Chemical mapping of a 170-nucleotide RNA with DMS and 2A3. The RNA was probed in 150 mM KOAc, 10 mM MgCl2 and 150 mM bicine (pH 8.5) at 24 C. For DMS the reverse transcriptase was MarathonRT. The 2A3 profile rests on 10,275 reads.

RNA sequence: GGGAACGACUCGAGUAGAGUCGAAAAGCCUAUCUCAAAUGGGCGCGUGUUGAAGGUAAGGACGGAUUUGUCAGUGUAGAGCUACAACCUCCUUGCAAAUUCUUGAUUGCGGGACCAAAAGGACCUGGGGCUGAUUCGUUCGCGAAUCAGAAAAGAAACAACAACAACAAC
Reactivity to DMS in 0.01 (KOAc 150mM, MgCl2 10mM, bicine 150mM(pH8.5), 24C), signal-to-noise 4, nucleotides 027 to 129: g000c000c000u040a060u040c160u040c240a080a100a090u050g020g020g000c000g040c180g070u030g020u060u000g060a020a090g000g000u000a000a000g000g000a050c210g000g000a090u000u000u000g000u060c130a020g040u050g010u000a160g000a140g050c000u020a040c080a000a070c080c000u020c010c010u030u080g000c000a000a000a000u000u000c100u000u000g020a040u000u000g030c050g010g000g000a120c090c070a050a060a100a040g020g010a070c070c040u000g010g040g020g010
Reactivity to 2A3 in 0.01 (KOAc 150mM, MgCl2 10mM, bicine 150mM(pH8.5), 24C), signal-to-noise 4, nucleotides 027 to 129: g030c010c040u060a060u050c160u060c070a190a230a100u070g010g030g000c060g000c040g040u110g110u080u180g020a030a020g070g020u010a000a020g050g020a030c250g020g000a090u050u050u060g050u050c100a010g000u000g030u130a100g020a030g140c010u010a000c010a010a000c000c010u040c000c000u000u000g000c020a040a050a060u090u040c040u030u150g100a130u050u150g010c000g000g030g050a090c020c000a040a060a020a090g050g000a040c010c020u030g000g000g000g020